[RMDB]
RNA sequence: GGGAACGACUCGAGUAGAGUCGAAAACUUAAAAUUAUUGAAGCAAUGGCUGUACUUGAAUCAAUAUGUAGAAGCAACCCAAAGCCACGGAUUGGCAGCAAAUUAAAAGCUCCAUCUGAAUACGUCUACUAGAGAGUAUGUUAUCUAGUGAUAGCAACUUUUAUGGGAUAUUCGUAUCCCAUAAAAGAAAAGAAACAACAACAACAAC
Reactivity to 2A3 in 0.01 (KOAc 150mM, MgCl2 10mM, bicine 150mM(pH8.5), 24C), signal-to-noise 2, nucleotides 027 to 156: c010u040u040a020a050a120a200u200u090a100u070u190g030a050a000g040c030a040a100u100g030g000c050u060g060u140a050c000u080u080g030a060a040u030c030a020a070u070a050u140g050u040a080g030a160a000g040c000a020a100c000c000c000a070a070a000g040c000c020a010c010g010g010a010u150u210g010g010c070a010g000c020a040a020a220u200u170a140a290a030a030g020c000u000c000c000a000u020c000u000g060a080a040u100a060c040g010u000c030u060a020c000u010a050g000a010g000a010g100u130a130u170g130u160u100a040u030c030u020a030g010u010g030a010u020a020g030c000a000a080
Reactivity to DMS in 0.01 (KOAc 150mM, MgCl2 10mM, bicine 150mM(pH8.5), 24C), signal-to-noise 2, nucleotides 027 to 156: c020u020u000a030a060a040a160u000u010a090u000u000g010a100a080g020c010a040a110u010g050g050c060u000g010u030a110c030u000u000g000a100a050u000c010a000a080u000a040u000g000u010a140g000a090a040g000c040a090a260c010c010c000a080a150a120g010c050c020a060c020g000g000a080u000u000g090g020c120a060g000c030a040a080a190u000u030a070a130a070a250g030c010u000c010c020a050u020c020u000g010a030a180u010a030c050g020u000c040u000a070c000u000a060g010a090g010a180g000u000a100u010g020u010u000a110u000c020u000a040g020u000g000a070u000a060g030c020a080a110
Description:
An RNA of 207 nucleotides, treated with 2A3 and DMS and read out base by base. DMS adducts were read by reverse transcription with MarathonRT. Source: RMDB library OK3TST, as collected in RNAgym. Values cover nucleotides 27 to 156. Conditions: 150 mM KOAc, 10 mM MgCl2 and 150 mM bicine (pH 8.5), 24 C.